[RMDB]
RNA sequence: GGGAACGACUCGAGUAGAGUCGAAAAACAAAUACUCACGCUGCUAGGCGGGUGCGCACUGCUGUCUGGCCCGGCGCGGCGCUAGGGCGCACACCUAGCGUUGCAAAGGGUAACCGGGCUGAAAAAACAUUCUUAGGUUGUUCGCAACCUAAGAAUGAAAAGAAACAACAACAACAAC
Reactivity to DMS in 0.01 (KOAc 150mM, MgCl2 10mM, bicine 150mM(pH8.5), 24C), signal-to-noise 4, nucleotides 027 to 126: a050c110a050a060a080u000a030c030u000c020a150c150g000c060u000g000c090u010a080g000g010c030g020g000g020u020g000c030g000c060a160c030u000g000c030u000g020u010c060u010g020g000c010c000c000g010g000c300g010c010g010g010c010g010c000u010a020g000g010g000c120g010c130a040c110a180c000c000u010a000g010c010g020u000u000g000c010a060a230a160g000g000g020u010a050a100c030c010g010g000g000c010u010g000a000a020a070a120a050a100
Reactivity to 2A3 in 0.01 (KOAc 150mM, MgCl2 10mM, bicine 150mM(pH8.5), 24C), signal-to-noise 2, nucleotides 027 to 126: a000c050a020a070a010u130a040c010u020c020a040c060g100c040u110g040c080u110a080g060g050c030g030g060g000u040g010c040g000c020a070c080u060g010c010u030g040u140c040u050g040g010c000c000c000g020g000c010g010c000g020g020c000g000c010u000a000g010g030g010c120g010c080a040c010a030c030c000u000a000g000c010g000u010u000g000c000a040a070a030g050g000g010u010a020a000c010c010g000g000g000c020u040g090a100a050a010a000a000a010